[RMDB]
RNA sequence: GGGAACGACUCGAGUAGAGUCGAAAAACUGAUACCUUACGAGGUAUCAGAAUGACUUCGUGGUAGAGCGCCACGAACGGAAAAUAAAGAAAGUUCGAUUGAAACGCACCGUGUACGCACGGUGCGAAAAAGUCGAUCCAGUUCGCUGGAUCGACAACACCCUGAUAUGGUUCGCCAUAUCAGGGUGAAAAGAAACAACAACAACAAC
Reactivity to 2A3 in 0.01 (KOAc 150mM, MgCl2 10mM, bicine 150mM(pH8.5), 24C), signal-to-noise 2, nucleotides 027 to 156: a010c000u000g000a000u000a000c000c000u090u050a070c300g110a020g010g050u000a000u000c000a000g000a010a030u100g030a060c040u010u000c000g000u000g030g000u010a090g000a000g070c000g000c010c000a000c000g000a010a000c020g060g010a130a050a000a060u110a040a020a030g150a060a070a010g000u050u050c070g080a190u040u290g090a080a110a000c020g010c000a010c000c010g000u000g010u030a010c200g010c020a000c010g010g000u000g020c000g000a000a000a000a000a000g000u010c000g000a020u000c020c000a000g040u080u130c200g020c150u020g000g000a000u000c000g010a000c000a010a000